An RNA of 207 nucleotides, treated with 2A3 and read out base by base. It was measured as part of the RMDB library OK3TST. The reactions ran in a buffer of 150 mM KOAc, 10 mM MgCl2 and 150 mM bicine (pH 8.5), at 24 C. Values cover nucleotides 27 to 156. For 2A3 the reverse transcriptase was SuperScript II with manganese.

RNA sequence: GGGAACGACUCGAGUAGAGUCGAAAACGGCGAGGGCGCGCUGGAAGUCGUCCCAGCGUUCAUCGACCCAGGCUGCCCGGUCGUCGAAGUACACCUUGUCGCAUCCGAGGGAGUUGGCGACGUGUACCUUGAGCCAGUAUAGGCCACGCUUGCCGAGGCCUCUGCGUGUUUUCGAACACGCAGAGGCAAAAGAAACAACAACAACAAC
Reactivity to 2A3 in 0.01 (KOAc 150mM, MgCl2 10mM, bicine 150mM(pH8.5), 24C), signal-to-noise 1, nucleotides 027 to 156: c050g060g000c010g070a070g010g000g070c010g000c030g000c060u000g000g060a060a000g050u160c030g070u110c090c000c000a000g080c010g060u090u070c030a150u080c170g110a150c030c000c010a030g030g000c000u010g020c000c000c000g000g080u060c100g010u000c010g070a020a000g000u000a000c010a050c010c090u070u140g020u010c040g020c160a090u040c010c070g140a200g010g170g000a080g060u130u180g170g000c010g000a000c080g020u010g010u000a150c000c000u000u100g000a000g000c000c120a000g030u090a150u090a040g050g000c030c030a010c020g070c000u010u060g000c000c000g020a030g010